[RMDB]
RNA sequence: GGGAACGACUCGAGUAGAGUCGAAAACAAUCAACAAUAUGGUUUGUGUAGUUAUGCUGAAAAUCGUUGAGGUUGUAUGGAAUAGGUUAUCCGUAAGACCUUAAGUUGAAAAACUUUAAAAUUAAUCAAAAUCAUGUACACUUCGGUGUACAUGAAACGAACACCUUCAGUUCGCUGAAGGUGUUCGAAAAGAAACAACAACAACAAC
Reactivity to 2A3 in 0.01 (KOAc 150mM, MgCl2 10mM, bicine 150mM(pH8.5), 24C), signal-to-noise 1, nucleotides 027 to 156: c010a000a070u130c030a010a010c000a080a130u170a120u230g050g000u030u010u030g030u080g030u010a060g080u150u000a040u140g020c010u120g090a010a060a000a000u050c030g030u040u070g030a020g020g000u000u010g010u070a110u030g010g020a050a030u000a090g030g020u040u120a010u130c030c060g000u000a030a050g020a000c000c000u000u020a040a000g020u040u020g020a060a000a000a070a000c040u140u160u050a040a030a110a090u150u070a090a000u090c030a010a080a000a170u070c000a000u000g000u010a000c000a000c000u000u050c210g070g000u020g000u000a000c000a000u000g010a000a000a000